[RMDB]
RNA sequence: GGGAACGACUCGAGUAGAGUCGAAAAGAUAUGGAGGAUGCUAGCUCCCCACUCGGAAACGAGUGAAGAGCUUGGACCAUUCCUCCUAAGUCAAACCUUGUGCCAUACUUCGGUAUGGCACAAGGAACUAUGGAUACUUGUUCGCAAGUAUCCAUAGAAAAGAAACAACAACAACAAC
Reactivity to DMS in 0.01 (KOAc 150mM, MgCl2 10mM, bicine 150mM(pH8.5), 24C), signal-to-noise 6, nucleotides 027 to 126: g000a040u000a300u000g000g010a010g010g010a020u000g010c020u000a010g010c000u000c000c030c030c000a010c000u000c000g000g000a070a100a160c010g010a010g020u010g010a030a040g010a010g000c010u000u010g030g010a110c250c040a070u000u000c000c000u010c000c000u000a010a080g010u000c030a110a120a170c010c000u000u000g010u000g010c010c000a010u000a010c000u000u010c190g020g000u000a000u000g000g000c000a000c000a010a000g010g000a020a050
Reactivity to 2A3 in 0.01 (KOAc 150mM, MgCl2 10mM, bicine 150mM(pH8.5), 24C), signal-to-noise 5, nucleotides 027 to 126: g020a010u090a030u200g000g000a000g000g000a000u020g020c010u010a010g000c000u000c000c020c010c000a010c000u010c000g010g030a090a080a050c010g000a000g010u010g000a020a030g010a000g000c030u110u140g050g070a090c130c020a060u220u140c000c000u000c000c000u030a100a010g060u050c060a070a040a150c000c010u000u000g000u000g000c010c000a010u000a010c000u050u080c290g110g000u010a000u000g000g000c010a000c000a000a000g000g000a000a010